[RMDB]
RNA sequence: GGGAACGACUCGAGUAGAGUCGAAAAGAAUCACCGUACCUAUUUAGGUUUACGCUCCAAGAUCGGUGGAUAGCAGCCCUAUCAAUAUCUAGGAGAACUGUGCUGUGUUUAGAAGAUUAGGUAGUCUAUUACACAGCCAUGUUCGCAUGGCUGUGAAGAGUACACAUUACUUCGGUAAUGUGUACUCAAAAGAAACAACAACAACAAC
Reactivity to 2A3 in 0.01 (KOAc 150mM, MgCl2 10mM, bicine 150mM(pH8.5), 24C), signal-to-noise 4, nucleotides 027 to 156: g070a010a060u090c000a010c000c020g030u040a030c000c010u070a190u190u230u300a040g000g010u010u010u080a040c050g010c010u010c030c000a050a000g030a100u050c020g020g010u030g050g040a030u080a050g060c070a010g010c020c000c000u040a080u120c030a070a100u040a010u150c040u030a040g040g000a030g000a060a070c080u050g040u080g090c040u020g020u030g060u040u040u010a070g020a140a020g010a080u110u110a020g090g000u040a040g070u020c030u050a100u040u060a040c000a000c000a000g000c010c000a000u020g000u010u010c060g000c110a000u000g000g000c000u000g000u030g000a050a020
Reactivity to DMS in 0.01 (KOAc 150mM, MgCl2 10mM, bicine 150mM(pH8.5), 24C), signal-to-noise 2, nucleotides 027 to 156: g000a120a130u000c030a150c030c010g000u010a050c010c000u010a140u000u000u000a070g030g000u000u010u000a080c070g020c030u000c030c030a120a060g000a060u000c040g010g000u010g010g020a090u010a130g020c070a180g000c060c100c000u000a160u000c030a060a130u000a070u000c080u010a150g000g000a100g020a050a070c030u010g020u000g030c010u000g010u010g010u000u000u000a060g010a060a080g010a160u000u000a060g030g030u000a060g020u010c030u000a070u000u000a200c000a000c000a020g000c000c000a000u000g010u000u010c230g000c000a000u010g000g000c000u000g040u000g030a050a110
Structure probing data (2A3 and DMS) for a 207-nucleotide construct. Reactivities are given for positions 27 through 156. 2A3 adducts were read by reverse transcription with SuperScript II with manganese. For 2A3, 3,266 sequencing reads were counted. For DMS, 5,175 sequencing reads were counted.